[RMDB]
RNA sequence: GGGAACGACUCGAGUAGAGUCGAAAAUCGUUAAGCACAGCGGACAUCUGGUCGAGGAUCUCUGCAAGACGUGUCAUACGAUCAGUUACUCUGCAAGUCUUGCUGCGCUUCGUUGAUCAGCGCAUCAGUCCUAGCUAUAGUUCGCUAUAGCUAGGACAAAAGAAACAACAACAACAAC
Reactivity to DMS in 0.01 (KOAc 150mM, MgCl2 10mM, bicine 150mM(pH8.5), 24C), signal-to-noise 6, nucleotides 027 to 126: u000c050g020u000u000a100a090g040c030a060c070a130g020c010g000g020a050c050a120u000c020u000g010g010u000c070g010a110g000g010a040u000c110u000c010u000g010c160a110a080g000a050c200g000u010g000u010c060a090u010a050c030g020a040u000c050a040g020u010u000a110c230u000c080u000g000c090a130a080g010u000c010u000u010g010c010u000g020c040g010c010u000u010c120g000u000u000g000a070u010c080a070g000c120g020c080a060u000c100a120
Reactivity to 2A3 in 0.01 (KOAc 150mM, MgCl2 10mM, bicine 150mM(pH8.5), 24C), signal-to-noise 5, nucleotides 027 to 126: u080c020g010u020u100a040a010g030c020a010c010a030g020c000g020g000a000c000a050u020c010u030g070g020u060c040g020a070g020g030a050u040c030u000c010u100g030c020a010a050g140a070c100g040u030g020u040c010a040u080a170c020g010a030u040c010a000g020u030u050a070c040u060c040u100g060c080a110a020g010u000c020u050u170g010c010u000g010c010g000c020u030u020c040g050u020u070g030a090u070c050a020g050c010g000c050a040u050c040a050
Source information: The record gives the reactivity of an RNA of 177 nucleotides to DMS and 2A3. The RNA was probed in 150 mM KOAc, 10 mM MgCl2 and 150 mM bicine (pH 8.5) at 24 C. The 2A3 profile rests on 9,386 reads.